[RMDB]
RNA sequence: GGGAACGACUCGAGUAGAGUCGAAAAUCGUACUUACCUCUCACUCUGUGGCUACCUUGACGGCGCCCACAAUUGUGAAUCAAGAGAGGUAUGUUAAAAUUACUGGGUUGUACCCAACCAUUACGGUCAAUAGACAAAGCUUCGGCUUUGUCUAUUGAAAAGAAACAACAACAACAAC
Reactivity to 2A3 in 0.01 (KOAc 150mM, MgCl2 10mM, bicine 150mM(pH8.5), 24C), signal-to-noise 2, nucleotides 027 to 126: u070c010g050u050a000c010u000u000a000c010c000u000c000u000c000a010c010u050c040u030g020u030g010g000c000u070a100c010c010u080u090g150a110c120g020g000c010g070c040c040c020a010c000a020a230u120u120g030u040g100a030a120u150c090a130a030g000a000g000a000g050g020u000a000u010g000u000u050a040a050a040a040u090u050a030c080u040g060g000g000u030u000g020u210a280c010c000c000a010a000c000c000a050u150u140a090c080g020g010u000
Reactivity to DMS in 0.01 (KOAc 150mM, MgCl2 10mM, bicine 150mM(pH8.5), 24C), signal-to-noise 1, nucleotides 027 to 126: u000c080g020u000a090c010u000u000a010c020c000u020c000u020c000a170c100u020c080u030g030u000g010g030c060u010a120c000c020u000u000g050a160c190g010g040c170g000c300c000c010a010c020a020a120u010u010g020u000g000a160a060u010c210a020a070g030a020g000a030g000g000u000a000u000g000u000u010a040a060a130a080u000u020a050c050u000g020g000g010u000u000g000u020a110c000c000c000a100a060c070c100a130u000u010a130c230g000g000u010